Overview: Structure probing data (2A3 and DMS) for a 177-nucleotide construct. For DMS, 3,670 sequencing reads were counted. The 2A3 profile rests on 13,707 reads. The reactions ran in a buffer of 150 mM KOAc, 10 mM MgCl2 and 150 mM bicine (pH 8.5), at 24 C.
RNA sequence: GGGAACGACUCGAGUAGAGUCGAAAAGAUAUGGAGAUGUGAAUAGUGAUGACCUUAACCGUGUCGGAAACGACACACUAAGCAAGCUACACAUCUCCUAAGUCAAACUUUGCGUUCGCGCAAAGAACCCAGAACAUAUGUUCGCAUAUGUUCUGGGAAAAGAAACAACAACAACAAC
Reactivity to 2A3 in 0.01 (KOAc 150mM, MgCl2 10mM, bicine 150mM(pH8.5), 24C), signal-to-noise 5, nucleotides 027 to 126: g000a000u020a000u050g000g000a010g010a000u020g020u010g090a300a300u090a130g020u030g160a300u050g020a060c010c000u050u000a060a130c180c170g000u010g000u010c010g000g010a000a000a010c000g010a000c010a000c000a010c030u000a000a000g000c040a060a070g000c000u000a010c000a000c000a010u010c000u000c000c000u000a000a000g000u000c020a030a100a180c010u020u010u020g020c000g060u010u080c300g000c000g000c180a000a020a010g030a040a070
Reactivity to DMS in 0.01 (KOAc 150mM, MgCl2 10mM, bicine 150mM(pH8.5), 24C), signal-to-noise 4, nucleotides 027 to 126: g000a020u000a020u010g000g000a010g000a010u000g010u000g000a170a180u010a010g030u000g000a090u020g000a030c300c000u000u000a030a080c270c290g000u010g020u000c000g020g000a010a000a030c000g020a000c000a000c040a060c220u000a000a010g000c020a030a020g000c000u000a060c000a000c000a000u000c000u000c000c000u000a000a050g000u000c010a140a140a230c020u000u000u000g010c010g040u010u000c240g050c020g020c010a000a020a020g010a130a150